This 177-nucleotide RNA was probed chemically with 2A3 and DMS.
DMS adducts were read by reverse transcription with MarathonRT.
Values cover nucleotides 27 to 126.
For 2A3 the reverse transcriptase was SuperScript II with manganese.
The data come from the RNA Mapping Database (RMDB), library TTRDEL.
The DMS profile rests on 1,122 reads.
The RNA was probed in 150 mM KOAc, 10 mM MgCl2 and 150 mM bicine (pH 8.5) at 24 C.
In probing experiments dimethyl sulfate is read out at A N1 and C N3, which are open when not base-paired.
[RMDB]
RNA sequence: GGGAACGACUCGAGUAGAGUCGAAAAGAUAUGGAUUGUAUCAAGCACACGCGACGAAGUCGGAAACGACAGAGCGUGUGACCCUUGGUACAAUCCUAAGUCAAAGGUACCUCUUCGGAGGUACCAAGUUAGGUUACGACUUCGGUCGUAACCUAACAAAAGAAACAACAACAACAAC
Reactivity to 2A3 in 0.01 (KOAc 150mM, MgCl2 10mM, bicine 150mM(pH8.5), 24C), signal-to-noise 1, nucleotides 027 to 126: g020a040u060a050u140g000g000a010u000u020g000u010a010u000c000a000a010g050c000a020c000a000c020g060c010g300a300c050g090a200a050g010u020c000g030g050a070a100a090c030g010a000c020a020g040a010g000c000g020u000g010u000g000a000c020c000c000u000u000g040g000u000a010c000a010a000u040c000c000u000a050a000g000u000c020a170a010a050g060g000u010a010c000c000u000c000u030u100c300g170g010a010g000g020u010a000c000c010a000a000
Reactivity to DMS in 0.01 (KOAc 150mM, MgCl2 10mM, bicine 150mM(pH8.5), 24C), signal-to-noise 2, nucleotides 027 to 126: g000a050u020a300u000g000g000a010u000u010g000u020a010u000c010a030a050g000c020a000c010a000c010g000c040g000a190c220g000a070a110g000u020c000g040g000a140a070a100c000g030a000c010a050g000a130g010c020g010u000g010u000g000a000c220c240c050u000u000g020g000u000a010c010a010a000u000c000c000u000a020a080g000u000c030a060a150a140g010g000u000a010c000c000u000c000u010u010c190g020g000a010g040g020u010a000c010c000a000a070